[RMDB]
RNA sequence: GGGAACGACUCGAGUAGAGUCGAAAACGGGUUACUUGGCUCUGUAGCUAAAGGUAAGGUAACUCGCUGAUGACCGGCCUGCCGACCGGCUAAGUCAGAGGCUAAAUCCAAAUAGGUCGGCUAAGUAUGUAGAGCUGUCUGUAGAGGGCUUGCGGACCACAUAUUCCCGGUUCGCCGGGAAUAUGUGAAAAGAAACAACAACAACAAC
Reactivity to 2A3 in 0.01 (KOAc 150mM, MgCl2 10mM, bicine 150mM(pH8.5), 24C), signal-to-noise 2, nucleotides 027 to 156: c040g000g020g010u020u000a000c030u060u090g080g000c010u040c090u190g270u220a060g090c060u140a140a070a080g090g080u070a020a060g020g010u010a020a040c000u000c010g000c000u040g050a070u080g020a020c010c090g060g030c010c000u020g010c000c010g010a010c000c000g010g000c000u010a030a000g020u010c000a010g010a030g100g000c050u060a000a050a100u030c060c040a020a000a020u040a000g000g000u010c050g000g000c000u000a010a010g000u010a050u230g040u050a020g030a010g130c060u030g000u060c030u040g060u090a050g020a110g100g050g020c000u040u060g050c000g000g030a020c010
Reactivity to DMS in 0.01 (KOAc 150mM, MgCl2 10mM, bicine 150mM(pH8.5), 24C), signal-to-noise 1, nucleotides 027 to 156: c060g000g000g000u020u000a000c020u000u010g030g020c000u020c040u010g040u000a230g040c130u000a100a090a080g040g020u020a050a030g020g000u000a010a010c000u000c000g020c000u000g000a200u000g010a020c050c010g050g000c000c000u010g040c070c050g000a020c020c010g020g000c010u000a040a220g020u000c040a070g010a300g020g050c040u000a040a130a130u010c040c020a030a060a140u000a080g030g000u010c020g010g000c010u000a010a080g040u000a070u000g000u000a050g010a100g000c020u000g000u010c010u000g000u000a120g020a120g040g040g010c050u000u010g010c040g020g030a150c070
Chemical mapping of a 207-nucleotide RNA with 2A3 and DMS.
For 2A3, 1,262 sequencing reads were counted.
It was measured as part of the RMDB library RSTRND.
For 2A3 the reverse transcriptase was SuperScript II with manganese.